The data come from the RNA Mapping Database (RMDB), library RSTRND.
Structure probing data (2A3) for a 207-nucleotide construct.
2A3 adducts were read by reverse transcription with SuperScript II with manganese.
The reactions ran in a buffer of 150 mM KOAc, 10 mM MgCl2 and 150 mM bicine (pH 8.5), at 24 C.

[RMDB]
RNA sequence: GGGAACGACUCGAGUAGAGUCGAAAAUUGCACUCCGAGUUUCAGCAUGGAUGGACUCGUUAAAGAAGUCUAUGCAACCUUUAGAUGCAGACGAUUAUUCGUAUGCAAUGGCUGCCUAAUUAGCAAAAGUUAAUUAACCAGCCAUCGCUCUUCAGCGCCAGUCCUACCUGUUCGCAGGUAGGACUGGAAAAGAAACAACAACAACAAC
Reactivity to 2A3 in 0.01 (KOAc 150mM, MgCl2 10mM, bicine 150mM(pH8.5), 24C), signal-to-noise 1, nucleotides 027 to 156: u160u230g000c040a060c090u040c010c000g010a000g040u000u020u080c010a010g010c000a000u020g010g000a010u030g070g020a000c010u000c070g090u080u010a020a020a000g040a010a010g030u000c000u000a010u040g000c030a080a160c070c070u060u120u210a080g000a070u220g040c000a000g010a000c010g010a050u140u070a160u300u170c030g020u020a040u020g000c050a020a040u000g000g000c000u000g000c000c000u030a010a000u000u000a000g000c050a170a250a040a170g000u010u000a000a000u000u000a010a010c020c020a000g050c000c000a050u070c030g000c030u050c070u300u090c230a030g010c000g020